Conditions: 150 mM KOAc, 10 mM MgCl2 and 150 mM bicine (pH 8.5), 24 C. Chemical mapping of a 207-nucleotide RNA with DMS and 2A3. High DMS reactivity at an A or C suggests that its Watson-Crick edge is free. For 2A3, 4,025 sequencing reads were counted.
RNA sequence: GGGAACGACUCGAGUAGAGUCGAAAAGAUAUGGAUCUAUGAAAUUCAUAAGGGAGAAAUCGGUUUGCCAUAAUUCGGAAACGAAUUAUGUAUUUCCGAUUUCGAAGAACUUAUGAUGAGUAAUAGAUCCUAAGUCAAACCCGGUUUCGACCGGGAAUCCUAGUAUACAGUUCGCUGUAUACUAGGAAAAAGAAACAACAACAACAAC
Reactivity to DMS in 0.01 (KOAc 150mM, MgCl2 10mM, bicine 150mM(pH8.5), 24C), signal-to-noise 1, nucleotides 027 to 156: g000a060u000a160u060g000g000a060u020c000u000a010u010g000a260a220a300u000u000c010a020u000a010a010g000g020g000a260g020a010a040a000u000c000g000g030u000u000u000g010c300c020a000u000a000a000u000u000c010g030g020a200a120a150c010g050a010a000u000u000a010u000g000u000a070u010u000u000c000c000g000a010u000u000u010c010g000a110a180g000a230a210c010u000u000a020u000g000a030u000g000a220g000u000a060a010u000a000g000a000u000c020c010u000a000a020g000u000c040a140a070a160c000c020c000g000g000u000u000u000c220g020a080c040c000g000g030g000a000a000
Reactivity to 2A3 in 0.01 (KOAc 150mM, MgCl2 10mM, bicine 150mM(pH8.5), 24C), signal-to-noise 2, nucleotides 027 to 156: g000a000u050a030u110g000g000a000u000c000u010a010u000g040a060a100a120u010u000c000a000u000a000a000g010g000g010a030g010a000a000a000u000c010g010g030u000u020u070g050c040c000a000u000a000a000u010u000c000g020g000a030a050a030c000g000a000a000u000u010a000u000g000u010a050u000u020u000c000c000g010a000u000u010u000c000g010a010a010g000a000a000c000u010u000a000u000g010a000u000g010a010g020u010a010a010u000a010g000a000u000c000c000u000a010a000g020u000c010a070a020a190c010c000c000g010g020u090u120u050c190g120a020c010c010g010g000g000a000a010

Source information
The DMS profile rests on 2,006 reads.